[RMDB]
RNA sequence: GGGAACGACUCGAGUAGAGUCGAAAACCCCUCAACGUUAGAGGUCCCUUGGUGGCUGUAUCUAUCGAUGUCGCUUCACAGGAUACCCAUUGAGGCUAGAAAACCGGGGUUCUUCGGAACCCCGGAACCUAGUAAGUAGGUUCGCCUACUUACUAGGAAAAGAAACAACAACAACAAC
Reactivity to 2A3 in 0.01 (KOAc 150mM, MgCl2 10mM, bicine 150mM(pH8.5), 24C), signal-to-noise 3, nucleotides 027 to 126: c000c000c010c000u030c020a080a080c070g070u140u190a070g010a060g070g050u130c010c000c000u030u080g050g000u020g010g060c140u100g030u030a020u000c040u020a130u150c110g070a070u040g120u170c030g030c270u110u030c060a050c020a090g030g000a020u050a030c010c010c010a010u010u000g020a010g010g000c020u100a080g120a140a130a060a050c010c000g000g000g000g000u000u000c010u050u020c150g060g000a010a000c000c060c030c010g000g000a000a000
Reactivity to DMS in 0.01 (KOAc 150mM, MgCl2 10mM, bicine 150mM(pH8.5), 24C), signal-to-noise 2, nucleotides 027 to 126: c020c000c000c070u000c020a080a040c180g000u010u010a080g010a070g040g010u000c220c000c020u000u010g010g020u000g010g000c170u010g040u010a020u010c000u000a120u000c160g010a100u010g000u010c200g010c080u010u000c010a070c190a170g000g010a040u000a050c010c000c000a090u000u000g010a020g010g010c170u020a120g000a110a060a070a120c000c010g010g010g000g030u010u010c000u000u020c170g000g000a020a010c000c000c010c020g000g000a010a010
Annotation
The record gives the reactivity of an RNA of 177 nucleotides to 2A3 and DMS. The RNA was probed in 150 mM KOAc, 10 mM MgCl2 and 150 mM bicine (pH 8.5) at 24 C. For DMS, 1,475 sequencing reads were counted. The data come from the RNA Mapping Database (RMDB), library RFMREP. For 2A3, 2,061 sequencing reads were counted.